Source: RMDB library OK1LIB, as collected in RNAgym. Structure probing data (2A3) for a 177-nucleotide construct. The reactions ran in a buffer of 150 mM KOAc, 10 mM MgCl2 and 150 mM bicine (pH 8.5), at 24 C. As a SHAPE reagent, 2A3 marks flexible, mostly unpaired nucleotides at the ribose 2'-OH.
[RMDB]
RNA sequence: GGGAACGACUCGAGUAGAGUCGAAAACGAAAUACAGUGAGUGGACGGAACAAAUCCCCUUCCCACCUCCCCACUGUCCACUCACUGUCUUCCUAAUAGGAAAUAUAAAUCGGGGGUGGGAAGGGGACAUGCUAGGUCACUUCGGUGACCUAGCAUGAAAAGAAACAACAACAACAAC
Reactivity to 2A3 in 0.01 (KOAc 150mM, MgCl2 10mM, bicine 150mM(pH8.5), 24C), signal-to-noise 2, nucleotides 027 to 126: c060g100a000a000a110u290a040c000a000g010u000g010a000g020u000g020g030a010c010g000g060a020a030c060a120a200a070u040c000c000c020c010u040u000c000c000c000a000c000c010u040c030c040c000c040a070c040u040g010u010c000c010a000c000u010c020a010c000u000g000u000c000u000u000c000c000u080a150a050u120a130g080g090a000a100a030u180a040u080a040a140a000u210c080g000g000g000g000g000u000g010g000g000a000a000g000g000g000g000a000